[RMDB]
RNA sequence: GGGAACGACUCGAGUAGAGUCGAAAAGCUCGCAUUCAUUGGGGUAUAACUGGAAGCAGGUGAGGGGGUGAAACCAAUCAUUAAGUCUGCAAAGUCUUCUAAUGGGUUGUAUUCCUUUCUUCACUUGGGAAAGACAUUAUUGGCAGGUUGACUCCCACAUUCUUAAAGGAUUCGUCCUUUAAGAAUGAAAAGAAACAACAACAACAAC
Reactivity to 2A3 in 0.01 (KOAc 150mM, MgCl2 10mM, bicine 150mM(pH8.5), 24C), signal-to-noise 3, nucleotides 027 to 156: g030c010u000c020g060c060a100u100u060c020a030u070u120g050g000g000g000u070a090u020a130a070c030u050g020g040a030a030g070c020a020g010g040u040g030a020g000g020g000g010g000u110g050a020a010a010c040c020a020a030u050c000a010u010u040a030a000g010u020c010u030g000c020a100a060a030g000u010c000u070u000c020u110a050a030u040g090g050g000u020u010g020u030a120u060u070c000c000u010u100u070c020u060u050c030a040c040u010u050g070g020g020a070a060a040g030a010c030a030u090u160a060u140u100g070g030c040a010g050g000u010u020g020a020c010u010c020c000c000a010
Reactivity to DMS in 0.01 (KOAc 150mM, MgCl2 10mM, bicine 150mM(pH8.5), 24C), signal-to-noise 2, nucleotides 027 to 156: g010c020u000c050g010c080a190u000u020c060a150u000u000g030g010g010g010u000a050u000a050a130c080u000g000g050a120a160g000c040a020g010g030u000g010a090g020g000g020g020g000u010g010a070a040a050c110c020a070a080u000c040a060u000u000a050a060g000u010c030u010g000c170a090a060a080g020u000c010u010u000c090u000a040a070u000g000g000g020u010u000g010u010a190u010u000c020c010u000u010u000c040u000u000c040a040c030u000u020g030g030g000a050a060a190g000a090c070a060u010u000a100u000u000g000g000c020a070g010g010u000u000g000a130c050u000c020c000c000a220